Structure probing data (2A3 and DMS) for a 207-nucleotide construct. It was measured as part of the RMDB library OK3TST. The RNA was probed in 150 mM KOAc, 10 mM MgCl2 and 150 mM bicine (pH 8.5) at 24 C.
RNA sequence: GGGAACGACUCGAGUAGAGUCGAAAAGCUGGCCAUCCUCUGAGGUAUUCCAUUUACUGGCUCAUUGGUGGUGAAGGACUGAAUCUUCUCUGUUAAUAGAAAUUGAAAGAGGUAAAAAGUCAUCUAUGCAGCUGAGAACUUAUGGUUCUCAAUAUGACCAUAGCAGCCUAUUCGUAGGCUGCUAUGGAAAAGAAACAACAACAACAAC
Reactivity to 2A3 in 0.01 (KOAc 150mM, MgCl2 10mM, bicine 150mM(pH8.5), 24C), signal-to-noise 2, nucleotides 027 to 156: g020c010u030g020g040c000c000a070u160c120c030u020c030u010g000a000g120g050u220a260u160u200c000c020a060u110u180u220a190c170u030g030g000c000u000c020a000u010u010g000g010u000g000g070u030g040a080a070g040g010a010c040u010g080a090a050u020c040u060u000c010u000c010u000g070u070u020a090a060u090a230g170a140a250a090u040u080g040a070a150a000g000a040g000g060u120a090a070a000a020a020g000u010c020a010u020c070u030a070u120g060c040a000g000c040u060g010a000g000a000a010c060u210u140a100u300g070g000u020u050c000u010c010a010a010u200a150u170g060a020
Reactivity to DMS in 0.01 (KOAc 150mM, MgCl2 10mM, bicine 150mM(pH8.5), 24C), signal-to-noise 1, nucleotides 027 to 156: g030c060u000g000g020c000c050a040u000c030c030u010c090u020g000a130g020g020u000a070u010u030c050c060a140u000u020u010a120c070u030g000g000c000u000c050a130u000u000g010g040u000g040g000u010g010a100a120g000g030a030c060u000g010a070a300u000c030u010u020c010u020c010u010g000u020u000a040a090u000a150g030a120a130a230u010u000g000a050a030a080g030a040g020g020u000a040a120a100a110a070g020u000c030a070u000c070u010a110u020g000c020a090g070c020u000g010a020g000a050a010c030u000u020a100u020g050g010u000u010c000u000c010a060a070u010a090u000g000a240